Chemical mapping of a 177-nucleotide RNA with DMS and 2A3.
It was measured as part of the RMDB library TTRDEL.
Reactivities are given for positions 27 through 126.
For DMS, 4,549 sequencing reads were counted.
For 2A3 the reverse transcriptase was SuperScript II with manganese.
High DMS reactivity at an A or C suggests that its Watson-Crick edge is free.
The RNA was probed in 150 mM KOAc, 10 mM MgCl2 and 150 mM bicine (pH 8.5) at 24 C.
[RMDB]
RNA sequence: GGGAACGACUCGAGUAGAGUCGAAAAGAUAUGGAGCAUACUUCCUUGGAUUUACAUGGAAAUUCGGAAACGAACACCAUGUUGUCAGGAAGAAUGCUCCUAAGUCAAAUCCUACUUCGGUAGGAAAUCUAAAAUGAAGGUUCGCCUUCAUUUUAGAAAAAGAAACAACAACAACAAC
Reactivity to DMS in 0.01 (KOAc 150mM, MgCl2 10mM, bicine 150mM(pH8.5), 24C), signal-to-noise 5, nucleotides 027 to 126: g020a030u010a300u000g000g000a010g020c010a000u000a090c000u000u000c000c000u000u010g040g010a020u000u010u000a010c000a000u000g000g000a080a090a300u010u000c000g000g000a130a070a170c010g010a010a030c270a300c000c000a010u000g000u000u000g010u010c000a010g000g000a020a010g000a090a010u000g000c000u000c000c000u000a010a070g000u000c020a130a160a110u000c000c000u000a000c000u000u010c150g040g010u000a000g010g000a010a050a070
Reactivity to 2A3 in 0.01 (KOAc 150mM, MgCl2 10mM, bicine 150mM(pH8.5), 24C), signal-to-noise 3, nucleotides 027 to 126: g020a000u060a020u190g020g000a020g000c010a000u050a090c010u000u000c030c000u060u150g090g000a060u300u300u220a010c010a000u010g050g000a110a200a130u040u010c010g000g030a070a080a080c010g010a010a000c040a020c060c000a000u000g000u000u000g000u010c000a000g000g000a000a000g010a010a000u000g000c000u010c000c000u000a020a000g000u010c010a050a020a070u010c010c000u000a010c010u040u060c200g100g000u010a000g000g000a030a100a010